[RMDB]
RNA sequence: GGGAACGACUCGAGUAGAGUCGAAAACGGUAAAGAAGAUCACGGAACGAGGGCGGACGCUGACACUGCGGACGAUCUGGACGGACGAGGACGGGGUGUGCGUGGAGAUUGACACUGGGGACGAGCCUGUCCCGGUGUCUAUGCUCCCUGCAAUGACGUAUUUGAAUAGGUUCGCCUAUUCAAAUACAAAAGAAACAACAACAACAAC
Reactivity to DMS in 0.01 (KOAc 150mM, MgCl2 10mM, bicine 150mM(pH8.5), 24C), signal-to-noise 2, nucleotides 027 to 156: c060g010g010u010a040a080a090g010a110a090g000a090u000c090a100c080g010g010a070a060c070g000a060g000g020g020c080g010g030a060c060g010c020u000g000a080c070a120c090u000g010c040g000g020a070c030g000a080u000c030u000g000g040a070c020g000g020a070c040g010a090g030g020a070c040g040g010g010g000u000g030u000g000c040g030u000g000g010a050g010a100u010u000g000a020c000a050c000u010g060g050g010g000a050c000g010a090g040c020c020u000g010u000c000c000c000g010g000u010g010u010c000u000a020u010g000c020u000c000c010c030u000g000c030a060a100u000g010a200c150
Reactivity to 2A3 in 0.01 (KOAc 150mM, MgCl2 10mM, bicine 150mM(pH8.5), 24C), signal-to-noise 5, nucleotides 027 to 156: c020g030g050u150a050a050a030g060a040a010g010a060u080c040a030c110g040g020a060a030c040g020a050g030g030g010c030g010g020a010c020g000c040u020g020a030c030a030c170u050g010c020g030g050a040c030g020a070u010c020u040g030g020a030c030g050g030a010c020g000a010g000g020a010c030g000g000g000g020u100g020u030g030c010g030u090g020g000a010g000a000u020u030g000a010c000a000c030u060g100g000g000g010a010c020g010a040g190c050c150u110g020u010c000c000c000g000g000u000g000u000c000u010a010u120g080c010u000c000c000c010u040g000c010a030a160u100g020a040c090

Notes: Chemical mapping of a 207-nucleotide RNA with DMS and 2A3. The RNA was probed in 150 mM KOAc, 10 mM MgCl2 and 150 mM bicine (pH 8.5) at 24 C. Values cover nucleotides 27 to 156. Source: RMDB library OK3TST, as collected in RNAgym.